[RMDB]
RNA sequence: GGGAACGACUCGAGUAGAGUCGAAAAAAAGAUAUGGACCAGAUGGAGUAGAGGAUCACAUCGAUCACUUCUCGGAAACGAGAAGUGGGAGUGAUCCUUCUACGUUGAAAUCUGGUCCUAAGUCAAACAAGUGACGUAGGUUCGCCUACGUCACUUGAAAAGAAACAACAACAACAAC
Reactivity to DMS in 0.01 (KOAc 150mM, MgCl2 10mM, bicine 150mM(pH8.5), 24C), signal-to-noise 2, nucleotides 027 to 126: a090a080a070g000a020u000a300u010g010g000a030c010c000a010g020a030u000g050g000a080g000u000a020g000a020g000g000a010u010c000a000c020a190u000c300g000a140u010c010a000c000u000u000c000u000c000g000g000a050a080a150c000g040a020g000a010a010g030u000g000g000g020a040g040u010g000a000u000c000c000u010u000c000u000a000c000g000u010u000g010a070a130a000u000c000u010g010g000u000c000c000u000a000a070g010u000c030a100a160a200
This 177-nucleotide RNA was probed chemically with DMS. The data come from the RNA Mapping Database (RMDB), library TTRDES. The RNA was probed in 150 mM KOAc, 10 mM MgCl2 and 150 mM bicine (pH 8.5) at 24 C. Reactivities are rounded to 0.1 and cut off at 0 and 3.